Chemical mapping of a 177-nucleotide RNA with 2A3 and DMS. It was measured as part of the RMDB library OK2TST. Values cover nucleotides 27 to 126. For 2A3, 4,203 sequencing reads were counted.

RNA sequence: GGGAACGACUCGAGUAGAGUCGAAAACUUGAACUCGUGCUGCGGUGGGGUGCGGGCGAUGAUCUGGUUCUGACCCGUGCUGAUGUAGAGGUGGAUCUCCGCACCGAGGGGCUCCACCACGGUGACGCCCCUCUCCCUAUUUCGAUAGGGAGAGGGGAAAAGAAACAACAACAACAAC
Reactivity to 2A3 in 0.01 (KOAc 150mM, MgCl2 10mM, bicine 150mM(pH8.5), 24C), signal-to-noise 3, nucleotides 027 to 126: c020u050u120g090a080a020c020u010c040g050u060g070c020u010g010c010g000g040u040g000g040g000g040u060g030c020g020g030g000c030g080a070u090g020a040u060c050u080g270g100u090u000c050u070g150a120c000c020c000g030u100g020c060u100g020a110u130g060u090a040g010a050g150g050u010g030g020a020u010c000u000c020c020g020c040a140c040c020g030a100g020g030g020g000c010u000c010c000a010c000c000a000c010g030g020u050g030a020c010g010
Reactivity to DMS in 0.01 (KOAc 150mM, MgCl2 10mM, bicine 150mM(pH8.5), 24C), signal-to-noise 3, nucleotides 027 to 126: c060u000u010g020a060a140c090u010c040g020u010g010c040u010g020c050g010g040u000g000g010g000g000u000g010c030g000g000g010c050g010a100u010g000a030u000c040u000g010g000u000u010c020u000g010a130c050c030c030g010u000g010c070u010g020a080u000g030u010a120g000a060g010g020u010g020g000a050u000c010u000c030c000g010c090a130c100c070g000a160g010g000g000g000c080u000c040c030a030c020c010a020c040g000g020u000g000a100c080g000
The RNA was probed in 150 mM KOAc, 10 mM MgCl2 and 150 mM bicine (pH 8.5) at 24 C.